The record gives the reactivity of an RNA of 207 nucleotides to 2A3 and DMS. Conditions: 150 mM KOAc, 10 mM MgCl2 and 150 mM bicine (pH 8.5), 24 C. The 2A3 profile rests on 2,461 reads.
[RMDB]
RNA sequence: GGGAACGACUCGAGUAGAGUCGAAAAGUUAGGCGAGGCUCCUAUACAAACACAGGUUGCUGAUCUGACGACGUCGAGAGACGCCCAAGAUUAGGACAGGUUAUAUCGAACCAAGGUAUAUCCCCAUAAAACUCGGAACACUUCGGUGUUCCGAGAAGCUUUACAUUGUGUUCGCACAAUGUAAAGCAAAAGAAACAACAACAACAAC
Reactivity to 2A3 in 0.01 (KOAc 150mM, MgCl2 10mM, bicine 150mM(pH8.5), 24C), signal-to-noise 3, nucleotides 027 to 156: g020u020u030a030g000g040c070g070a100g040g040c070u030c030c000u080a080u080a150c130a030a190a010c060a010c030a090g120g030u140u150g130c010u010g000a050u010c010u030g010a020c020g010a010c000g000u010c010g000a020g000a010g000a100c000g000c010c000c000a030a030g030a070u060u100a020g030g030a020c030a060g040g000u060u050a050u010a010u050c040g040a060a080c060c030a090a040g020g010u000a030u010a020u050c000c030c000c000a020u190a070a160a020a040c010u000c000g000g000a000a000c000a010c000u020u050c140g080g010u000g000u000u000c000c000g000a000g000a010a000
Reactivity to DMS in 0.01 (KOAc 150mM, MgCl2 10mM, bicine 150mM(pH8.5), 24C), signal-to-noise 2, nucleotides 027 to 156: g000u010u000a050g000g030c040g000a210g040g010c010u020c020c000u000a060u010a170c090a050a070a120c050a080c070a090g020g030u010u000g010c000u010g000a040u020c000u010g000a140c020g000a050c000g000u000c010g020a300g010a300g000a000c000g000c010c020c080a270a090g010a050u010u000a070g000g010a100c020a060g000g010u000u000a020u010a050u000c020g000a120a300c110c070a060a120g030g010u000a040u000a090u010c040c010c000c040a100u010a040a090a070a180c000u000c000g000g000a010a010c010a010c000u000u000c300g080g010u010g000u000u000c000c000g000a010g020a010a050